[RMDB]
RNA sequence: GGGAACGACUCGAGUAGAGUCGAAAAUAUACAUCAGAAGUCGGCACAACUCCCGACUCGCGGUGAGCGAUGCAGCGUAGCCCUAGCUACGCAGCUGCUGUGCGGAUGGCUAGCAAAAGCUAGCCUACCGGUGGGCAGUAUUCGUACUGCCCACCGGAAAAGAAACAACAACAACAAC
Reactivity to 2A3 in 0.01 (KOAc 150mM, MgCl2 10mM, bicine 150mM(pH8.5), 24C), signal-to-noise 1, nucleotides 027 to 126: u210a000u000a030c020a050u050c000a010g080a190a040g020u000c000g000g020c070a000c010a300a240c130u030c020c000c020g000a010c010u000c010g080c000g000g060u100g010a030g000c000g070a080u130g000c000a000g030c000g000u020a000g000c000c000c120u090a050g000c000u000a000c000g000c000a000g010c000u000g000c000u040g050u080g050c000g000g170a130u060g000g000c000u010a000g000c000a040a140a300a000g010c000u000a000g000c020c000u010a000
Reactivity to DMS in 0.01 (KOAc 150mM, MgCl2 10mM, bicine 150mM(pH8.5), 24C), signal-to-noise 1, nucleotides 027 to 126: u010a210u060a080c040a030u010c020a080g000a140a010g000u000c000g000g000c300a040c120a070a120c300u080c130c000c000g000a040c050u000c040g000c300g030g000u040g000a130g000c000g000a070u010g000c010a000g050c010g000u020a000g000c000c130c090u000a020g030c000u000a000c000g010c120a000g000c000u000g030c030u000g000u030g000c060g010g060a200u000g030g030c000u020a020g000c010a120a190a020a050g020c000u000a000g000c000c000u000a000